Chemical mapping of a 177-nucleotide RNA with DMS and 2A3.

[RMDB]
RNA sequence: GGGAACGACUCGAGUAGAGUCGAAAAACGUUGAAGAUCAUCAACAGGACGAGCCACGCGCCGCCGUUGUGCGAUCCGUAGAACCGGGAGCUCCGACCGAUCUCGCGGGGGUUGCGCAGGAUACGGAACGCAAAAAUCCUUUCGAGGAUUUUUGCGUAAAAGAAACAACAACAACAAC
Reactivity to DMS in 0.01 (KOAc 150mM, MgCl2 10mM, bicine 150mM(pH8.5), 24C), signal-to-noise 1, nucleotides 027 to 126: a160c100g000u020u000g010a050a130g020a090u000c070a170u010c050a000a020c100a150g000g000a120c190g000a040g020c040c040a170c220g000c070g050c010c030g000c000c030g000u020u020g030u010g000c050g000a030u000c000c020g100u000a010g040a100a180c150c030g000g010g000a030g000c090u000c010c090g000a140c130c010g000a110u000c050u000c020g000c030g000g000g070g000g010u000u000g000c020g040c030a120g010g000a130u150a060c000g030g000a150
Reactivity to 2A3 in 0.01 (KOAc 150mM, MgCl2 10mM, bicine 150mM(pH8.5), 24C), signal-to-noise 1, nucleotides 027 to 126: a000c040g010u010u010g060a040a020g090a170u110c040a030u030c030a060a040c060a030g070g050a030c050g000a000g170c020c040a100c070g050c090g010c010c010g040c070c020g030u030u000g060u070g010c000g000a030u030c010c000g060u040a000g020a190a140c030c020g010g080g000a010g020c010u050c030c000g160a210c000c040g100a100u040c080u020c000g020c070g030g000g000g000g000u090u000g000c010g000c040a000g000g000a020u000a120c020g020g000a000